[RMDB]
RNA sequence: GGGAACGACUCGAGUAGAGUCGAAAAGUACUACGACGCGGAGCGCCGACCGGACGCUAUCGGCCUGGCUGUCCCGCUGGACAUGCGCAAGUACCUGGCCCACGUCGGGUACCCAAGGACCUACGUCGACGCGAUCGCUGAGCGCCAGGAGCUCGAAAAGACUAUUGUUUUUCGAAACAAUAGUCUUAAAAGAAACAACAACAACAAC
Reactivity to DMS in 0.01 (KOAc 150mM, MgCl2 10mM, bicine 150mM(pH8.5), 24C), signal-to-noise 2, nucleotides 027 to 156: g020u000a110c030u000a060c020g030a080c060g000c000g000g000a130g030c040g050c020c040g000a070c050c020g030g020a170c040g000c080u000a070u010c040g000g040c010c010u000g040g000c040u020g010u000c060c020c080g000c100u000g000g040a060c040a060u000g040c000g060c090a100a090g010u000a040c020c010u000g000g000c030c000c180a090c120g000u000c020g000g000g020u000a020c040c020c050a130a170g010g000a160c030c000u000a040c080g010u000c000g010a050c030g010c030g000a060u000c050g000c050u010g020a150g010c040g020c000c010a080g010g000a150g020c020u000c010g020a110a120
Reactivity to 2A3 in 0.01 (KOAc 150mM, MgCl2 10mM, bicine 150mM(pH8.5), 24C), signal-to-noise 3, nucleotides 027 to 156: g070u050a060c040u020a090c050g070a030c050g010c040g030g040a070g000c020g020c020c030g030a030c010c070g070g030a040c030g020c070u070a110u150c060g050g000c030c030u030g090g000c010u060g030u030c000c040c020g090c090u090g000g030a030c030a060u240g030c070g000c070a040a040g010u040a060c000c010u010g010g000c010c050c030a020c050g010u000c000g000g000g000u000a010c000c000c010a070a050g130g010a030c000c030u050a030c070g110u030c010g040a020c030g010c030g070a110u050c010g000c140u040g040a010g000c000g030c040c010a060g080g060a010g030c000u010c040g030a140a100